The data come from the RNA Mapping Database (RMDB), library ARCHII.
The record gives the reactivity of an RNA of 207 nucleotides to 2A3.
Values cover nucleotides 27 to 156.

[RMDB]
RNA sequence: GGGAACGACUCGAGUAGAGUCGAAAACCGAGCGCGCACUAUUUCGGCUUACCUAUCUUCGUGGGUCCGGUUCGAUCCGCGCGGUCAGAAUGUCUCAAUUCGAGUAAUCAAUUGUGCAGUUCUAGCAGCGAGCGGCAGUACCACUGGAGGGAAGCAACGUAGUUCUACCCUUCGGGGUAGAACUACGAAAAGAAACAACAACAACAAC
Reactivity to 2A3 in 0.01 (KOAc 150mM, MgCl2 10mM, bicine 150mM(pH8.5), 24C), signal-to-noise 1, nucleotides 027 to 156: c020c000g000a010g020c070g000c000g160c000a020c140u130a130u030u130u060c000g030g060c010u080u160a300c000c000u300a300u090c070u110u070c040g010u030g030g020g000u040c040c040g070g030u050u090c060g000a040u030c050c010g040c040g000c000g080g020u110c010a000g020a080a010u030g130u060c000u020c130a000a060u010u230c120g000a000g060u280a060a140u070c040a010a020u010u060g010u020g020c020a040g050u030u020c010u050a000g000c030a040g040c050g060a010g000c020g090g010c000a060g070u030a020c010c010a000c020u050g010g000a040g050g000g010a070a000g040c020a030a110

Record summary
2A3 adducts were read by reverse transcription with SuperScript II with manganese.